[RMDB]
RNA sequence: GGGAACGACUCGAGUAGAGUCGAAAACUUUGGUGAGGCCCUAUCUAGUAUAGCAAUCCACCAAGCAGGUGAUUUCACACAAUUCAGGUUCUCAAAGAAAAUGCGCCCUGACUUGACAGGUAUGGUCAUACUCGCUACGAUUCGUCGUAGCGAGUAUAAAAGAAACAACAACAACAAC
Reactivity to DMS in 0.01 (KOAc 150mM, MgCl2 10mM, bicine 150mM(pH8.5), 24C), signal-to-noise 3, nucleotides 027 to 126: c060u080u000u000g010g000u040g000a090g000g000c280c300c000u020a020u000c040u040a170g020u050a070u020a030g000c070a060a300u000c070c000a000c010c010a050a000g000c150a090g030g030u000g000a090u020u010u010c020a110c100a040c100a060a100u040u010c010a080g010g030u000u040c000u000c020a090a060a080g020a150a050a090a060u000g000c130g000c250c010c000u000g000a070c040u000u020g030a030c010a060g000g020u000a020u000g020g000u020c160
Reactivity to 2A3 in 0.01 (KOAc 150mM, MgCl2 10mM, bicine 150mM(pH8.5), 24C), signal-to-noise 3, nucleotides 027 to 126: c010u020u040u140g100g000u040g010a080g020g010c030c010c000u000a040u030c020u030a060g150u120a040u020a080g040c000a010a020u040c050c030a010c000c000a050a000g050c080a070g000g090u040g050a170u010u150u120c090a080c030a010c010a090a050u060u000c010a040g040g000u050u050c030u030c010a080a100a010g160a040a070a040a020u110g030c030g040c020c000c000u040g010a070c020u080u030g010a000c010a010g060g020u160a060u130g070g000u040c020
Annotation
Structure probing data (DMS and 2A3) for a 177-nucleotide construct. The 2A3 profile rests on 1,848 reads. The DMS profile rests on 2,775 reads. Values are in units of 0.01, from 0 to 300, in steps of 10.